[RMDB]
RNA sequence: GGGAACGACUCGAGUAGAGUCGAAAAUUGCAUAGUAACUGUUUGUCUUAGCAAAGUUGAGUUUUAUUGUGUAGUUUCCAGGAUUUUCCUCUAUCUUCAAUGCGACUUUACCAUUGGAGUCUGUAGUGGAUCCGCAUUUAUUCGUAAAUGCGGAUCCAAAAGAAACAACAACAACAAC
Reactivity to 2A3 in 0.01 (KOAc 150mM, MgCl2 10mM, bicine 150mM(pH8.5), 24C), signal-to-noise 2, nucleotides 027 to 126: u000u000g010c020a010u050a080g000u020a000a060c000u050g160u140u060u030g090u020c100u130u190a030g010c000a000a000a030g020u220u260g080a020g010u000u110u050u080a030u150u120g040u020g020u000a000g000u080u040u000c070c040a000g060g070a030u090u050u000u000c020c000u000c000u030a030u030c000u010u040c020a030a030u020g130c030g120a140c160u120u180u300a150c020c020a020u000u000g060g020a010g010u080c120u090g040u070a020g000u130